Source information
Chemical mapping of a 177-nucleotide RNA with 2A3 and DMS. It was measured as part of the RMDB library RFM100. The DMS profile rests on 1,560 reads. For 2A3, 1,406 sequencing reads were counted.
[RMDB]
RNA sequence: GGGAACGACUCGAGUAGAGUCGAAAAGCCGCCGGUCGGUGCCCGGCGCGCCGGGCCAUGCAGCGACGGCCGCCGCGGAGCUCCGAGCAGCGGUAGCGCCCCCCUGUAAAGCGGUUCGCUAUGCCGGCAUGAUAGACGCUUUCGAGCGUCUAUCAUGAAAAGAAACAACAACAACAAC
Reactivity to 2A3 in 0.01 (KOAc 150mM, MgCl2 10mM, bicine 150mM(pH8.5), 24C), signal-to-noise 2, nucleotides 027 to 126: g010c000c000g000c010c020g080g270u000c000g000g040u020g010c000c000c000g000g020c010g010c060g000c000c000g030g020g010c010c010a130u300g060c190a120g010c030g260a300c010g090g000c020c000g000c010c000g030c180g080g020a070g030c040u000c000c010g010a030g010c000a010g000c000g000g010u020a020g030c010g020c010c000c000c000c000c000u050g090u210a070a130a010g040c040g070g010u110u130c060g020c050u050a020u090g000c000c000g040g020
Reactivity to DMS in 0.01 (KOAc 150mM, MgCl2 10mM, bicine 150mM(pH8.5), 24C), signal-to-noise 1, nucleotides 027 to 126: g000c000c010g060c000c090g060g000u000c010g030g030u040g010c000c000c010g060g010c050g000c300g010c020c000g010g030g000c030c020a050u010g010c180a120g010c060g020a090c000g020g000c000c000g000c010c010g000c130g000g010a160g000c050u000c000c000g020a060g020c050a120g010c000g000g000u010a050g000c120g000c000c030c010c110c000c020u010g000u020a040a110a180g000c050g010g000u040u010c050g000c040u020a040u010g020c040c020g010g000